[RMDB]
RNA sequence: GGGAACGACUCGAGUAGAGUCGAAAAGGUAGUCGGAGACGACUACCCACGAUCAGUUCGCUGAUCGGAGCGUGCAUAGUAGUAGUGUCCUAGCACGAGCAAGCUUGUCAGACACUAGAAGUGAGAUAGCACAAGCCGAGAAGAGAGAAGACAAGCGGACCUAGAUACACUUCGGUGUAUCUAGGUCAAAAGAAACAACAACAACAAC
Reactivity to DMS in 0.01 (KOAc 150mM, MgCl2 10mM, bicine 150mM(pH8.5), 24C), signal-to-noise 2, nucleotides 027 to 156: g000g030u000a000g050u000c000g000g010a300g010a300c000g000a010c020u000a000c000c000c030a080c000g000a000u000c000a020g060u000u000c300g020c000u000g000a000u020c000g050g000a020g040c030g040u000g050c040a180u010a110g000u000a060g020u000a020g000u000g010u000c040c040u010a090g030c030a030c010g000a090g010c060a100a140g050c010u000u000g000u010c060a140g020a060c040a020c030u000a030g010a050a100g010u010g000a090g000a070u000a070g020c030a120c040a050a200g000c050c050g000a210g030a050a090g020a140g000a130g000a140a100g010a050c000a030a040g080c040g000
Reactivity to 2A3 in 0.01 (KOAc 150mM, MgCl2 10mM, bicine 150mM(pH8.5), 24C), signal-to-noise 1, nucleotides 027 to 156: g000g010u000a000g000u000c010g010g010a050g000a050c000g000a010c000u000a000c010c010c000a020c000g030a010u000c010a000g020u040u060c050g000c060u000g000a000u000c010g000g040a040g000c010g000u010g010c010a160u040a020g060u020a010g020u000a000g000u000g000u000c000c000u020a020g000c000a000c000g000a040g040c060a050a010g030c000u000u010g000u000c000a000g000a040c010a000c000u000a000g000a130a020g020u030g000a070g010a020u080a030g020c000a010c020a060a000g000c010c010g050a020g020a090a000g060a010g010a020g000a070a010g000a020c000a000a010g020c000g000

Annotation:
The record gives the reactivity of an RNA of 207 nucleotides to DMS and 2A3. 2A3 is a SHAPE reagent: it acylates the 2'-hydroxyl of flexible nucleotides of all four kinds.